The data come from the RNA Mapping Database (RMDB), library 15KLIB. An RNA of 170 nucleotides, treated with DMS and 2A3 and read out base by base. For DMS, 16,524 sequencing reads were counted. Values cover nucleotides 27 to 129. The RNA was probed in 150 mM KOAc, 10 mM MgCl2 and 150 mM bicine (pH 8.5) at 24 C.

[RMDB]
RNA sequence: GGGAACGACUCGAGUAGAGUCGAAAAACCAAUUCUUUGGGUCAAUAAAGCAUCUUAUGAUACUAAUCUUAAUAAGUUCAAUAGAGCUAGUUUGCGUCAAAUUUUUGACGUAGCCCCCAUUGAACUCGAGCUUGAAGCUUCGGCUUCAAGAAAAGAAACAACAACAACAAC
Reactivity to DMS in 0.01 (KOAc 150mM, MgCl2 10mM, bicine 150mM(pH8.5), 24C), signal-to-noise 5, nucleotides 027 to 129: a070c020c040a110a040u030u030c050u030u040u020g000g050g000u040c050a050a030u000a090a120a030g030c000a160u040c030u010u040a120u050g000a060u040a070c030u010a100a080u000c180u050u050a070a100u130a160a030g020u040u020c020a050a260u040a000g010a040g030c030u010a020g000u010u020u030g030c090g080u030c010a010a040a200u070u080u010u060u010g030a050c000g000u000a030g030c030c020c030c010c040a050u070u020g000a040a010c020u010c090g020a080g040
Reactivity to 2A3 in 0.01 (KOAc 150mM, MgCl2 10mM, bicine 150mM(pH8.5), 24C), signal-to-noise 9, nucleotides 027 to 129: a000c000c000a010a040u090u020c030u030u020u040g010g000g000u030c030a040a060u080a140a130a020g010c020a250u000c010u020u100a080u110g030a020u030a140c030u050a070a090u120c030u090u110a110a090u160a270a030g000u010u010c020a030a050u020a070g020a010g000c020u020a050g100u090u130u070g010c000g010u000c020a060a110a170u190u200u050u040u020g010a010c000g000u030a020g010c000c000c000c010c000a020u010u010g010a040a020c020u030c060g020a010g030